[RMDB]
RNA sequence: GGGAACGACUCGAGUAGAGUCGAAAAGAUCGGAAACAGCAGCAGGUGAGUCCGCCUUAUGUGAAGGAUCGGCUGAAACACGAGGAAAUACUGAGCCAACGCAAGACGGUAGCCGAACAGUAGCAAUAAAACGCUUACGUGUUCGCACGUAAGCGAAGUUAUGGGGAGAGUUCGCUCUCCCCAUAACAAAAGAAACAACAACAACAAC
Reactivity to 2A3 in 0.01 (KOAc 150mM, MgCl2 10mM, bicine 150mM(pH8.5), 24C), signal-to-noise 3, nucleotides 027 to 156: g010a070u070c040g040g030a160a050a010c030a040g070c000a000g000c010a020g050g010u060g030a060g050u030c040c040g040c030c010u120u110a120u100g090u070g080a020a020g030g010a050u060c020g000g000c060u090g010a030a120a050c110a010c080g010a030g030g100a060a070a030u110a060c040u070g010a020g020c000c010a020a020c050g000c050a050a010g020a020c010g030g000u030a000g040c040c040g000a020a020c010a020g050u070a000g080c050a020a020u060a170a090a020a000c010g020c000u000u000a010c000g020u000g020u040u040c130g050c080a000c000g000u000a000a000g000c000g010a020a000
Reactivity to DMS in 0.01 (KOAc 150mM, MgCl2 10mM, bicine 150mM(pH8.5), 24C), signal-to-noise 2, nucleotides 027 to 156: g020a100u000c040g000g010a130a080a100c040a130g010c040a070g030c040a050g020g060u000g000a180g000u000c010c020g050c010c010u010u000a040u020g000u000g020a100a080g010g020a070u000c050g000g000c030u000g010a090a080a050c020a090c040g000a110g030g000a090a160a070u010a120c040u000g020a080g000c020c000a010a120c040g020c040a030a060g010a140c040g030g020u000a090g010c040c040g020a060a060c040a090g010u000a050g000c070a030a060u010a020a090a080a100c050g000c000u010u000a000c010g020u100g020u020u030c300g050c030a020c000g000u000a020a000g040c010g020a000a020
Structure probing data (2A3 and DMS) for a 207-nucleotide construct. Conditions: 150 mM KOAc, 10 mM MgCl2 and 150 mM bicine (pH 8.5), 24 C. The 2A3 profile rests on 2,347 reads. It was measured as part of the RMDB library M2RFPK. The DMS profile rests on 2,393 reads.